[RMDB]
RNA sequence: GGGAACGACUCGAGUAGAGUCGAAAACCCACCAAGUUCUUAUAAAGAGAAGCAGAGGGACUGGCCCGACGAAGCUUCAGCAACCGGUGUAAUGGCGAAAGCCAUGACCAAGGUGCUAAAUCCAGCAAGCUCGAACAGCUUGGAAGAUAAGAACAGAAAUAUUUAAAUGAUUCGUCAUUUAAAUAUUAAAAGAAACAACAACAACAAC
Reactivity to DMS in 0.01 (KOAc 150mM, MgCl2 10mM, bicine 150mM(pH8.5), 24C), signal-to-noise 1, nucleotides 027 to 156: c000c000c000a180c030c060a090a120g030u000u000c000u000u010a040u010a050a150a140g000a300g020a030a030g040c000a110g000a090g000g020g000a140c030u000g050g090c080c030c020g020a180c080g050a140a200g020c020u000u000c030a110g000c000a050a040c010c040g000g060u000g000u060a060a040u000g020g030c000g030a090a070a260g000c000c000a000u000g020a070c040c020a080a170g010g040u000g050c000u000a060a060a110u020c030c010a100g000c000a040a010g020c030u000c040g020a160a220c120a110g000c010u000u010g010g010a070a140g000a090u010a010a020g000a060a050c040a130g000a160
Reactivity to 2A3 in 0.01 (KOAc 150mM, MgCl2 10mM, bicine 150mM(pH8.5), 24C), signal-to-noise 2, nucleotides 027 to 156: c010c000c000a000c000c060a100a030g000u040u030c000u000u050a040u050a080a290a010g070a000g000a000a000g000c000a010g020a010g000g000g000a010c010u020g000g040c020c000c010g080a120c010g000a010a000g020c000u010u010c010a000g000c000a040a080c020c010g000g030u010g160u280a120a020u010g000g000c000g030a060a100a000g000c040c000a000u000g010a000c000c020a050a090g000g000u000g000c010u020a030a040a030u060c010c000a010g080c010a070a000g000c020u100c160g100a210a100c040a040g010c010u010u010g020g020a030a020g000a040u040a030a000g010a020a000c010a020g120a040